[RMDB]
RNA sequence: GGGAACGACUCGAGUAGAGUCGAAAAUCUAUCAAACCAAUGGGGGAUAAAUAUAUGGAGCACGUGAGUGUGGUAGUAUAUGGGGCAGAUGUUAUAUGUGCAAGUUGCGUUAAUGCGCCAACAUCGACAACGACUCAUAUUUCGAUAUGAGUCGUUGAAAAGAAACAACAACAACAAC
Reactivity to DMS in 0.01 (KOAc 150mM, MgCl2 10mM, bicine 150mM(pH8.5), 24C), signal-to-noise 4, nucleotides 027 to 126: u020c050u010a120u050c130a070a090a130c120c090a070a040u030g000g010g000g010g000a090u020a050a100a060u020a080u010a050u030g020g000a210g000c020a040c040g020u030g000a140g000u010g030u010g000g010u010a050g000u010a060u000a070u020g010g030g000g000c060a080g000a030u020g000u010u000a050u020a080u030g010u000g040c080a050a150g000u020u000g010c080g030u000u020a060a060u030g000c020g030c040c120a020a050c060a030u010c090g000a200
Reactivity to 2A3 in 0.01 (KOAc 150mM, MgCl2 10mM, bicine 150mM(pH8.5), 24C), signal-to-noise 4, nucleotides 027 to 126: u010c020u030a080u070c100a110a140a040c020c030a030a090u120g010g030g000g000g060a020u090a080a160a000u110a010u010a020u100g180g050a040g010c010a000c090g060u080g070a110g000u020g040u030g080g030u040a020g020u010a040u000a030u230g000g000g000g000c000a000g010a040u040g010u180u020a110u040a040u110g100u010g070c030a020a060g070u130u190g040c040g020u030u110a160a040u210g010c000g000c000c000a050a050c040a050u070c030g060a060